[RMDB]
RNA sequence: GGGAACGACUCGAGUAGAGUCGAAAAUCUAUGUUUCGACAUAGAACCGAUACCUUUGUGUUAUAUGAGGGGGAGUCUAUACAACCCAUUGGGUUGACAAGAUAGACAUCGAUCUGGAGUAUAACACUCUGGUUAGACGCCGAAGUUCGCUUCGGAAGUGUUAAUAGCUAUUCGUAGCUAUUAACACAAAAGAAACAACAACAACAAC
Reactivity to DMS in 0.01 (KOAc 150mM, MgCl2 10mM, bicine 150mM(pH8.5), 24C), signal-to-noise 4, nucleotides 027 to 156: u000c000u000a000u020g000u010u000u010c200g010a090c000a030u000a020g010a040a160c060c040g020a180u000a030c020c010u000u000u000g020u000g010u000u000a040u000a060u000g000a300g000g000g000g010g010a150g010u000c010u000a020u010a130c020a030a010c000c010c020a290u000u000g070g040g010u000u000g000a100c050a070a300g020a050u000a020g000a020c010a080u010c060g020a070u010c000u010g010g050a300g030u000a070u010a050a060c060a020c020u000c030u010g000g020u000u000a060g010a120c050g020c020c010g010a040a300g020u000u010c160g030c010u000u000c010g010g000a100a150
Reactivity to 2A3 in 0.01 (KOAc 150mM, MgCl2 10mM, bicine 150mM(pH8.5), 24C), signal-to-noise 8, nucleotides 027 to 156: u020c010u010a010u010g020u020u140u100c210g060a010c000a000u010a000g020a030a030c010c010g060a110u080a160c000c000u010u020u020g010u010g010u010u010a030u020a040u300g020a070g000g010g000g010g000a030g010u000c000u000a010u010a030c000a010a010c000c000c070a200u090u290g000g000g000u000u010g010a060c040a050a060g030a120u010a000g000a010c050a180u150c050g060a090u000c010u040g070g080a040g020u000a000u000a020a000c000a010c010u000c000u000g000g020u030u070a080g040a050c080g010c030c000g000a000a000g010u030u160c190g060c160u000u000c000g010g010a070a070